[RMDB]
RNA sequence: GGGAACGACUCGAGUAGAGUCGAAAACAUUUCAGCUGCAUGUGGUGAAUAUGCAUCAUAUAUUUACUUUAAGAGGUAAGAUUUUACUUGCAAAAUACAUGUGCAAAUUAGGGAUCCAUCAGUUGAUGGAAGAGAUGGACUCUAGAAUAUUAUUUCACAUAAUUUAGGGGUUCGCCCCUAAAUUAUGAAAAGAAACAACAACAACAAC
Reactivity to 2A3 in 0.01 (KOAc 150mM, MgCl2 10mM, bicine 150mM(pH8.5), 24C), signal-to-noise 4, nucleotides 027 to 156: c010a020u150u230u210c080a070g010c050u040g020c010a010u010g000u020g010g080u140g090a090a040u070a030u100g030c020a020u050c060a020u100a030u030a040u210u050u010a030c030u070u070u160a110a050g070a040g090g020u020a040a030g010a110u090u140u020u170a070c040u020u050g010c010a000a060a070a120u140a060c030a040u040g030u010g020c000a020a040a140u090u010a020g050g000g050a120u010c040c010a010u010c010a030g100u190u110g060a120u110g070g070a090a010g030a000g000a060u020g000g000a000c000u000c010u000a020g040a050a070u130a100u210u110a070u110u230u180c110a000
Reactivity to DMS in 0.01 (KOAc 150mM, MgCl2 10mM, bicine 150mM(pH8.5), 24C), signal-to-noise 1, nucleotides 027 to 156: c050a090u000u000u030c020a110g000c100u020g020c060a030u020g010u020g000g040u000g010a170a120u000a150u000g000c000a000u000c010a090u020a060u010a050u000u000u000a040c010u000u010u010a130a210g010a210g020g000u000a020a080g030a150u000u040u010u020a080c020u000u000g010c000a050a040a070a120u000a050c020a000u010g020u000g050c030a020a060a080u000u010a080g020g020g000a070u000c020c020a030u000c010a120g010u000u020g000a070u010g010g000a050a100g000a170g020a090u010g000g000a090c000u000c020u010a070g010a050a140u010a030u010u000a100u000u010u000c000a160